[RMDB]
RNA sequence: GGGAACGACUCGAGUAGAGUCGAAAACUCGCCGUUUUUGUGGCUGGCUUUCAGCGGGCUGGAGGAGCCGGGAGCGGAGGCGGAGGACCGAGCCAAAAACGUCAGCCGAGGCCGGGCGGCCCCGCUCAAAAUCUUCGUAUCUUCGGAUACGAAGAAACUCAAUUGAAAAGUUCGCUUUUCAAUUGAGAAAAGAAACAACAACAACAAC
Reactivity to 2A3 in 0.01 (KOAc 150mM, MgCl2 10mM, bicine 150mM(pH8.5), 24C), signal-to-noise 1, nucleotides 027 to 156: c020u020c040g080c040c000g020u030u020u010u030u140g080u050g050g000c030u020g040g000c010u080u090u100c050a050g040c130g010g050g020c030u060g020g140a060g050g010a020g090c060c010g020g020g020a040g020c030g020g040a140g030g010c010g040g090a120g040g060a030c010c010g020a050g000c000c000a050a030a000a140a070c030g090u100c050a020g060c020c020g000a010g000g000c000c000g010g000g030c010g030g010c010c020c000c000g020c000u010c020a090a110a040a130u020c000u000u000c000g000u000a000u000c010u040u050c240g060g000a000u000a010c000g000a000a000g000a000a000a000

Source: RMDB library M2RFPK, as collected in RNAgym.
This 207-nucleotide RNA was probed chemically with 2A3.
Reactivities are given for positions 27 through 156.
The RNA was probed in 150 mM KOAc, 10 mM MgCl2 and 150 mM bicine (pH 8.5) at 24 C.
For 2A3 the reverse transcriptase was SuperScript II with manganese.
For 2A3, 872 sequencing reads were counted.